[RMDB]
RNA sequence: GGGAACGACUCGAGUAGAGUCGAAAAGAUAUGGACGUAGACAAGCUGACUACCCACCUCGGAAACGAGAGGUCAGAACUACUUGUAUACGUCCUAAGUCAAACACUAGGCCUUCGGGCCUAGUGAACUCUGUCACCUAGUUCGCUAGGUGACAGAGAAAAGAAACAACAACAACAAC
Reactivity to DMS in 0.01 (KOAc 150mM, MgCl2 10mM, bicine 150mM(pH8.5), 24C), signal-to-noise 2, nucleotides 027 to 126: g010a080u010a300u030g000g020a000c020g040u000a000g010a000c020a000a010g000c010u000g000a060c000u010a090c040c030c050a300c250c000u010c010g020g000a090a070a140c000g010a010g000a070g010g000u000c020a000g010a050a020c020u000a210c010u000u010g010u000a020u000a020c000g010u000c010c000u010a020a060g000u010c090a110a110a220c000a000c000u000a010g020g000c000c010u000u060c280g000g040g030c000c000u000a000g070u010g030a020a110
Reactivity to 2A3 in 0.01 (KOAc 150mM, MgCl2 10mM, bicine 150mM(pH8.5), 24C), signal-to-noise 1, nucleotides 027 to 126: g090a030u170a100u200g000g000a000c010g020u010a020g010a050c000a010a000g020c000u000g020a020c000u140a170c070c090c000a090c000c010u020c000g000g050a080a020a040c020g000a020g010a060g020g040u010c000a010g000a040a020c110u300a020c010u130u020g010u020a090u000a020c050g010u060c000c000u000a010a010g070u030c070a010a060a110c010a000c000u000a010g000g040c000c020u040u150c300g080g000g030c020c000u000a000g000u000g000a000a000

Chemical mapping of a 177-nucleotide RNA with DMS and 2A3. The DMS profile rests on 1,065 reads. For 2A3 the reverse transcriptase was SuperScript II with manganese. The reactions ran in a buffer of 150 mM KOAc, 10 mM MgCl2 and 150 mM bicine (pH 8.5), at 24 C. It was measured as part of the RMDB library TTRDEL.